[RMDB]
RNA sequence: GGGAACGACUCGAGUAGAGUCGAAAACAGCAAAAAGGAACCGAUUCCCACCAAGUUCGGAAAGAGAUACCGGGCGAGGCGCUGAAGAAAGAAUCUCGCUUCAGACCCCCCAAGGACUCGACUGAAGAAUGCACGCCAUCGUUCGCGAUGGCGUGAACUCUGAAUAAAUGUUCGCAUUUAUUCAGAGAAAAGAAACAACAACAACAAC
Reactivity to 2A3 in 0.01 (KOAc 150mM, MgCl2 10mM, bicine 150mM(pH8.5), 24C), signal-to-noise 1, nucleotides 027 to 156: c010a010g110c070a000a130a040a000a190g120g040a050a030c050c010g020a130u020u040c030c010c010a030c040c030a100a060g020u010u000c000g000g030a130a080a000g000a010g020a030u070a080c000c030g000g000g030c220g020a170g070g060c260g040c100u040g030a000a000g010a020a300a020g060a050a110u090c140u100c300g050c050u010u000c000a030g010a300c000c000c050c000c000c010a030a040g030g000a010c010u000c000g010a020c010u060g000a000a010g030a060a090u160g070c000a000c000g000c020c010a010u040c010g000u080u060c090g010c020g080a010u000g000g000c000g000u010g010a000a000